Chemical mapping of a 177-nucleotide RNA with DMS and 2A3. The reactions ran in a buffer of 150 mM KOAc, 10 mM MgCl2 and 150 mM bicine (pH 8.5), at 24 C. The 2A3 profile rests on 1,929 reads. The DMS profile rests on 2,050 reads.

RNA sequence: GGGAACGACUCGAGUAGAGUCGAAAAGGCCGGCGGCGGCACGAUUUUCACCGCGGGCAUCGUGCUGUCGGUGAUGAUCCUGCCUAUCGUCACAUCGAUAUCACGCGAAGUGUUCCGGCAGACUCCGAUAGUUAGUCCUGUUCGCAGGACUAACUAUAAAAGAAACAACAACAACAAC
Reactivity to DMS in 0.01 (KOAc 150mM, MgCl2 10mM, bicine 150mM(pH8.5), 24C), signal-to-noise 2, nucleotides 027 to 126: g010g010c040c050g010g030c160g000g000c190g010g010c050a010c230g000a020u000u000u010u010c040a040c060c090g010c100g020g020g000c060a050u000c200g010u000g000c010u010g020u010c020g010g020u010g020a000u000g010a010u000c020c050u000g000c060c040u000a040u010c030g010u010c060a030c040a070u000c040g000a070u010a110u010c120a060c130g010c070g000a040a090g000u000g010u000u000c020c000g010g000c040a090g000a090c080u010c020c050g000
Reactivity to 2A3 in 0.01 (KOAc 150mM, MgCl2 10mM, bicine 150mM(pH8.5), 24C), signal-to-noise 2, nucleotides 027 to 126: g050g020c000c010g020g030c020g000g000c020g000g000c010a010c020g000a000u040u030u040u020c070a010c030c030g000c060g070g000g010c080a170u210c160g170u180g090c010u060g100u180c010g000g000u010g000a000u030g000a000u000c000c050u020g000c010c000u080a130u100c020g050u010c030a020c010a090u040c010g030a020u050a050u250c040a040c160g020c030g100a150a030g010u030g010u130u050c020c000g000g040c020a030g010a050c040u010c040c010g060
2A3 is a SHAPE reagent: it acylates the 2'-hydroxyl of flexible nucleotides of all four kinds.